[RMDB]
RNA sequence: GGGAACGACUCGAGUAGAGUCGAAAAAGGAACAAGGGUGUUGAUUAUACUAAGAAGUUUCUUACAGUUGACGGUGUGCAAUAUUAUUGCUACACGUCUAAGGACACUUUAGAUGAUAUCUUACAACGAGGCAUCGCCUUCGGGCGAUGCAAAAGAAACAACAACAACAAC
Reactivity to DMS in 0.01 (KOAc 150mM, MgCl2 10mM, bicine 150mM(pH8.5), 24C), signal-to-noise 2, nucleotides 027 to 129: a140g000g020a030a060c140a070a170g000g000g000u010g020u000u030g000a050u000u000a040u000a040c090u050a130a160g010a110a000g050u010u060u000c020u060u000a150c190a180g030u060u050g050a080c010g000g000u050g020u000g060c000a000a050u000a140u070u080a020u100u000g010c040u010a020c000a000c010g040u020c020u050a100a040g070g000a060c040a040c100u040u010u000a020g020a110u050g000a110u070a070u000c100u030u030a000c100a000a000c050g000a050g020
Reactivity to 2A3 in 0.01 (KOAc 150mM, MgCl2 10mM, bicine 150mM(pH8.5), 24C), signal-to-noise 3, nucleotides 027 to 129: a000g130g030a060a000c040a030a070g100g000g000u000g000u000u000g010a110u040u080a040u020a000c020u010a000a090g060a050a030g030u000u010u010c030u070u010a080c120a260g080u070u090g080a020c020g000g100u010g000u000g030c000a020a000u070a130u300u030a030u110u140g000c000u080a020c080a000c000g000u000c000u000a000a000g000g020a000c010a000c010u010u070u020a090g030a130u160g000a030u060a000u020c010u010u080a080c050a000a000c070g030a030g000

Structure probing data (DMS and 2A3) for a 170-nucleotide construct. The DMS profile rests on 5,888 reads. The RNA was probed in 150 mM KOAc, 10 mM MgCl2 and 150 mM bicine (pH 8.5) at 24 C. In probing experiments dimethyl sulfate is read out at A N1 and C N3, which are open when not base-paired. For 2A3, 2,521 sequencing reads were counted.